[RMDB]
RNA sequence: GGGAACGACUCGAGUAGAGUCGAAAAUGUGGGGCCCACAAGCCUUCGUCGCGGACUCGUUGUUUGAGGGGAUCCACGAUGCGGCGGCGUUCAUCGUUGAGCGGCAGGAACUCGCAGCCGGGGAACACGAUGCAUCAGGAUUCGUCCUGAUGCAUCGAAAAGAAACAACAACAACAAC
Reactivity to DMS in 0.01 (KOAc 150mM, MgCl2 10mM, bicine 150mM(pH8.5), 24C), signal-to-noise 3, nucleotides 027 to 126: u030g010u000g010g000g020g010c030c010c020a090c120a080a090g000c000c040u000u000c040g010u000c030g010c040g020g000a050c050u020c060g000u000u000g000u000u000u050g010a210g000g000g000g000a070u000c010c010a060c030g000a080u020g010c300g020g000c010g000g010c030g000u030u030c040a090u010c060g000u010u010g000a100g000c030g010g030c060a060g000g020a060a060c050u010c040g010c050a040g020c040c010g000g020g000g000a070a110c170a170
Reactivity to 2A3 in 0.01 (KOAc 150mM, MgCl2 10mM, bicine 150mM(pH8.5), 24C), signal-to-noise 4, nucleotides 027 to 126: u140g030u060g000g010g030g030c010c010c010a030c010a030a010g040c000c050u090u090c060g030u020c030g010c030g030g060a070c020u010c070g050u030u080g070u050u050u120g090a060g000g000g010g030a060u020c000c000a010c040g010a030u100g000c010g010g000c010g020g000c040g050u040u070c050a140u090c070g070u060u130g050a050g020c030g050g000c020a040g030g070a060a100c020u020c070g040c010a000g010c020c000g010g010g000g040a030a010c070a000
The record gives the reactivity of an RNA of 177 nucleotides to DMS and 2A3. DMS adducts were read by reverse transcription with MarathonRT. Conditions: 150 mM KOAc, 10 mM MgCl2 and 150 mM bicine (pH 8.5), 24 C. For DMS, 5,412 sequencing reads were counted.